[RMDB]
RNA sequence: GGGAACGACUCGAGUAGAGUCGAAAAAAAAGAUAUGGAGUCGUAACUCGCAUCGAUCUAUGGGGUAAAUAUAUCGGAAACGAUAUAUCUGAAUACAUAGGGAGCGAGCCCGACUCCUAAGUCAAAAGUAUUUAUGUAUCUUCGGAUACAUAAAUACAAAAGAAACAACAACAACAAC
Reactivity to DMS in 0.01 (KOAc 150mM, MgCl2 10mM, bicine 150mM(pH8.5), 24C), signal-to-noise 3, nucleotides 027 to 126: a070a060a130a110g000a000u000a020u000g000g000a020g020u000c000g020u000a140a140c000u000c000g020c000a300u010c160g010a020u020c020u000a010u000g010g000g000g020u000a120a060a010u000a000u000a010u000c000g000g000a010a010a030c000g020a020u010a000u000a010u000c080u000g030a100a140u040a020c020a000u000a000g010g010g010a000g030c010g000a010g010c220c160c020g010a000c000u000c000c000u000a000a030g000u000c010a060a050a110a100
Reactivity to 2A3 in 0.01 (KOAc 150mM, MgCl2 10mM, bicine 150mM(pH8.5), 24C), signal-to-noise 1, nucleotides 027 to 126: a000a000a020a020g010a000u020a010u030g000g010a010g000u000c010g000u000a080a090c000u000c000g000c000a120u300c050g020a000u000c020u010a010u010g000g010g020g000u060a010a040a010u000a000u000a000u020c000g000g000a000a010a000c020g000a000u000a000u010a010u000c160u000g080a080a020u050a030c000a000u010a000g010g000g000a020g010c000g000a000g000c030c020c000g000a000c010u000c000c010u000a000a000g000u020c020a000a030a050a140